[RMDB]
RNA sequence: GGGAACGACUCGAGUAGAGUCGAAAACAUUGUCUGCUAGCAGAAUAUGGGAAGAUUUUGAGCUGUGCAGUUCAUUAGGCAUUUAGUGCAUGCCUCCAUGUGUGGGGUGUUGGUGACAUGGAGUAUGUACGAUCCAAUAUUUCGAUAUUGGAUCGUAAAAAGAAACAACAACAACAAC
Reactivity to DMS in 0.01 (KOAc 150mM, MgCl2 10mM, bicine 150mM(pH8.5), 24C), signal-to-noise 5, nucleotides 027 to 126: c070a080u020u010g020u010c020u010g000c030u010a060g010c040a200g000a080a050u010a040u010g020g010g010a100a080g010a100u020u000u010u010g000a100g010c010u010g000u020g000c070a020g000u010u000c030a050u010u020a050g010g000c030a030u000u020u010a070g010u020g010c140a030u020g000c080c010u000c020c020a020u000g010u010g010u030g010g000g000g010u000g000u000u000g010g010u020g020a030c050a040u010g000g000a050g010u010a030u020g010
Reactivity to 2A3 in 0.01 (KOAc 150mM, MgCl2 10mM, bicine 150mM(pH8.5), 24C), signal-to-noise 9, nucleotides 027 to 126: c050a050u060u130g040u040c030u030g010c030u050a040g020c010a010g040a140a060u130a100u190g080g060g020a060a050g030a100u020u060u090u150g060a060g010c020u020g040u080g090c010a020g030u090u070c030a060u080u090a050g030g000c040a020u030u050u160a080g030u060g040c030a010u020g020c010c010u020c010c010a050u050g030u010g040u100g020g050g000g030u070g050u080u110g050g060u080g020a010c010a020u010g010g000a010g030u060a040u100g060